This 207-nucleotide RNA was probed chemically with DMS and 2A3. The data come from the RNA Mapping Database (RMDB), library M2RFPK. DMS (dimethyl sulfate) methylates the pairing face of unpaired adenines and cytosines. The RNA was probed in 150 mM KOAc, 10 mM MgCl2 and 150 mM bicine (pH 8.5) at 24 C. 2A3 adducts were read by reverse transcription with SuperScript II with manganese. DMS adducts were read by reverse transcription with MarathonRT.

RNA sequence: GGGAACGACUCGAGUAGAGUCGAAAAAGACCACCUCUACGGAGGUGGUCAAGUCACGUAGCUAGUACCAGGUUGCAAUACUAGAGCGUUAGUCCUGGGGCGUACGGUGGCAGUACGGUGCCACCGAUAAAACUUGAAUACUUCGGUAUUCAAGUAAACUAAAGUCGAAGUUCGCUUCGACUUUAGUAAAAGAAACAACAACAACAAC
Reactivity to DMS in 0.01 (KOAc 150mM, MgCl2 10mM, bicine 150mM(pH8.5), 24C), signal-to-noise 1, nucleotides 027 to 156: a150g040a020c020c010a000c010c010u020c000u000a080c290g110g010a020g010g070u000g030g000u000c010a000a010g010u000c100a080c040g040u000a090g040c030u010a020g010u000a060c020c000a050g030g010u000u010g000c010a110a060u000a020c020u000a020g010a300g000c030g000u000u010a070g000u000c020c000u000g000g000g050g020c130g020u010a020c000g010g040u000g030g140c000a080g030u020a080c130g050g040u020g010c030c000a020c000c020g000a040u000a000a060a110a050c010u000u000g000a020a020u000a030c010u010u000c300g050g010u000a000u010u000c000a000a020g040u000a010a060
Reactivity to 2A3 in 0.01 (KOAc 150mM, MgCl2 10mM, bicine 150mM(pH8.5), 24C), signal-to-noise 2, nucleotides 027 to 156: a000g010a010c000c000a000c010c000u010c010u010a060c280g040g000a000g020g000u000g010g000u000c000a000a000g020u000c020a000c020g010u020a010g060c000u020a020g000u030a150c000c000a000g010g010u010u020g000c020a010a000u010a010c000u010a000g010a000g010c140g120u130u190a010g020u070c000c000u030g010g000g020g060c100g130u200a070c010g010g010u030g020g000c010a030g060u130a090c130g090g110u030g020c000c000a000c000c000g020a000u030a000a050a000a020c000u000u010g000a000a000u010a000c000u010u120c280g090g010u010a000u000u000c000a000a000g000u010a070a040